[RMDB]
RNA sequence: GGGAACGACUCGAGUAGAGUCGAAAACGGGACCGCCGGGAGUGCCUGGAUCCGACGGCAUCGACGUAAGUCUCUAACCUGAGACCAGGGCGGGAGGGAGGCGGCAGACAAAGGAGAACUUUGUGAGCGGUUCAUAAACUUUCGAGUUUAUGAACCGAAAAGAAACAACAACAACAAC
Reactivity to DMS in 0.01 (KOAc 150mM, MgCl2 10mM, bicine 150mM(pH8.5), 24C), signal-to-noise 2, nucleotides 027 to 126: c050g010g000g020a130c040c040g000c020c020g020g020g000a080g030u000g010c050c020u020g000g000a170u000c050c040g000a130c090g000g020c110a060u020c100g020a060c100g010u000a120a100g000u020c000u010c020u000a080a240c300c220u000g000a010g000a010c000c010a050g020g000g010c160g040g000g010a200g000g000g000a130g000g010c090g000g010c080a050g010a030c040a000a020a020g020g020a250g000a090a140c010u000u000u000g000u000g000a120g010
Reactivity to 2A3 in 0.01 (KOAc 150mM, MgCl2 10mM, bicine 150mM(pH8.5), 24C), signal-to-noise 2, nucleotides 027 to 126: c020g050g040g060a070c050c020g040c030c000g030g060g010a020g070u070g070c020c000u050g050g040a150u110c060c060g050a020c000g050g000c030a040u070c050g120a110c030g000u040a050a020g000u020c020u000c010u020a140a190c010c070u020g010a000g000a030c000c000a000g040g020g080c130g020g030g010a300g040g000g030a020g050g000c130g020g000c000a030g050a030c050a030a000a020g110g000a160g030a210a120c000u080u040u040g050u030g050a060g050